[RMDB]
RNA sequence: GGGAACGACUCGAGUAGAGUCGAAAAUCACCUUCGGAUUGCAGACAGGUCUCCGGAUGCAGACAUAGAGAGGCUAGAGAUUGACGGAUUUGAGCCUGGUACGUUCCGGCUAAGGGCAAAUGCGAGAUGUUCGGAGUGUUUUCGAACACUCCGAACAAAAAGAAACAACAACAACAAC
Reactivity to DMS in 0.01 (KOAc 150mM, MgCl2 10mM, bicine 150mM(pH8.5), 24C), signal-to-noise 1, nucleotides 027 to 126: u010c130a140c040c000u000u000c050g000g000a100u000u000g050c050a070g010a100c110a110g010g020u000c050u040c000c030g000g020a130u000g060c050a120g030a120c120a100u000a040g010a080g000a120g010g010c110u000a070g020a070g000a060u000u000g030a170c100g000g000a050u000u000u000g000a050g020c050c020u000g010g000u010a090c110g000u000u000c000c000g000g050c140u030a050a080g010g000g000c030a070a070a070u000g000c080g020a100g000a170